[RMDB]
RNA sequence: GGGAACGACUCGAGUAGAGUCGAAAACUCUUACUGUUCGCAGUAAGAGAAUGGGAUUCGAAUCCCUCCCUAACCGCGGGUAAGCGGCCGAAAAAUAAAAUAGAGAGGCGUGCUUCGGCACGCCUAACUAAACGAAUGAUUUCGAUCAUUCGUUUAGAAAAGAAACAACAACAACAAC
Reactivity to DMS in 0.01 (KOAc 150mM, MgCl2 10mM, bicine 150mM(pH8.5), 24C), signal-to-noise 4, nucleotides 027 to 126: c000u000c000u000u000a010c000u000g010u000u010c190g020c000a000g000u000a010a020g000a020g010a040a070u000g000g010g010a010u000u000c220g000a190a190u000c010c000c010u000c010c010c000u000a210a150c020c000g010c000g000g010g010u020a140a160g010c020g000g010c090c050g010a010a060a090a080a110u010a060a050a090a100u020a150g020a180g020a030g000g000c000g010u000g000c000u000u020c190g010g010c000a000c000g010c000c010u000a000a060
Reactivity to 2A3 in 0.01 (KOAc 150mM, MgCl2 10mM, bicine 150mM(pH8.5), 24C), signal-to-noise 3, nucleotides 027 to 126: c000u020c000u000u000a010c010u000g040u040u090c210g000c100a000g010u000a000a000g000a010g010a010a020u000g000g000g010a030u120u170c110g040a190a100u010c000c010c000u010c010c000c000u000a040a020c010c000g020c010g020g090g180u140a210a050g010c010g030g000c020c000g110a100a040a010a000a010u170a040a080a010a060u160a020g100a000g010a000g040g000c010g000u020g020c000u040u080c180g040g010c000a000c000g000c000c000u000a000a000
Annotation: An RNA of 177 nucleotides, treated with DMS and 2A3 and read out base by base. 2A3 adducts were read by reverse transcription with SuperScript II with manganese. Reactivities are rounded to 0.1 and cut off at 0 and 3. Reactivities are given for positions 27 through 126.